Source: RMDB library M2PK90, as collected in RNAgym. An RNA of 177 nucleotides, treated with 2A3 and DMS and read out base by base. DMS (dimethyl sulfate) methylates the pairing face of unpaired adenines and cytosines. For DMS the reverse transcriptase was MarathonRT. Values cover nucleotides 27 to 126.
RNA sequence: GGGAACGACUCGAGUAGAGUCGAAAAUACAACGGAGCAAAAGUGUGAAAAGUCCUCAAGCCGAAAACACACAGAGAGGACAUGACGGCAGCUCCGAUUAUAAAAUAUAACACAGAAUAAUAUUGAAAGUAGAGUCUAAAUUCGUUUAGACUCUACUAAAAGAAACAACAACAACAAC
Reactivity to 2A3 in 0.01 (KOAc 150mM, MgCl2 10mM, bicine 150mM(pH8.5), 24C), signal-to-noise 1, nucleotides 027 to 126: u140a010c000a050a010c010g000g000a000g040c020a000a040a060a110g050u070g000u060g090a080a040a060a130g000u040c000c000u000c000a030a000g080c040c040g140a100a120a070a020c080a010c010a000c030a040g110a040g000a000g110g040a000c000a000u020g060a010c010g010g000c040a000g020c000u000c010c000g000a000u000u010a010u030a000a030a020a020u220a010u020a060a030c030a000c010a020g150a150a060u110a130a030u120a070u190u170g020a050a180
Reactivity to DMS in 0.01 (KOAc 150mM, MgCl2 10mM, bicine 150mM(pH8.5), 24C), signal-to-noise 2, nucleotides 027 to 126: u000a110c100a100a120c010g000g010a030g020c010a040a100a210a140g020u000g000u010g000a040a130a150a110g000u000c010c000u000c010a130a190g020c090c060g000a050a070a070a090c110a050c100a060c100a140g000a240g010a030g000g000a000c030a010u010g000a050c040g010g000c200a150g000c010u000c000c000g000a050u010u010a090u010a060a050a040a030u000a030u000a040a030c010a090c040a060g000a050a040u010a080a030u010a070u000u010g000a060a080